[RMDB]
Record summary: Conditions: 150 mM KOAc, 10 mM MgCl2 and 150 mM bicine (pH 8.5), 24 C. An RNA of 207 nucleotides, treated with 2A3 and read out base by base.
RNA sequence: GGGAACGACUCGAGUAGAGUCGAAAAGAAAGAAAGAAAGAAGCCGGCUCUGCUAGUUCCACGGCAACCACGUUGAAAUUACAACGAAAGAAGCUCGCACUCAACUUCAACGGCUUAACGAGUGCAAAAAAGAAGUAUCACUUCGGUGAUACUUCAAGAUACGUAAGGAGUUCGCUCCUUACGUAUCAAAAGAAACAACAACAACAAC
Reactivity to 2A3 in 0.01 (KOAc 150mM, MgCl2 10mM, bicine 150mM(pH8.5), 24C), signal-to-noise 2, nucleotides 027 to 156: g090a000a120a000g090a020a150a010g060a080a260a020g050a090a000g110c110c020g000g000c010u000c000u010g030c000u010a040g000u040u000c000c030a010c000g050g020c060a020a080c030c000a010c000g000u010u010g090a120a170a120u200u130a100c000a010a000c010g020a040a070a030g010a010a000g000c150u230c230g000c040a010c000u010c010a040a090c010u020u010c020a120a050c030g030g000c000u020u000a020a000c030g000a000g000u000g000c020a000a000a000a060a040a010g000a000a000g020u010a000u000c000a010c020u080u110c200g030g000u000g000a000u000a000c000u010u000c000a000a000
Overview:
Source: RMDB library M2RFPK, as collected in RNAgym. Reactivities are given for positions 27 through 156. The 2A3 profile rests on 1,064 reads. 2A3 adducts were read by reverse transcription with SuperScript II with manganese.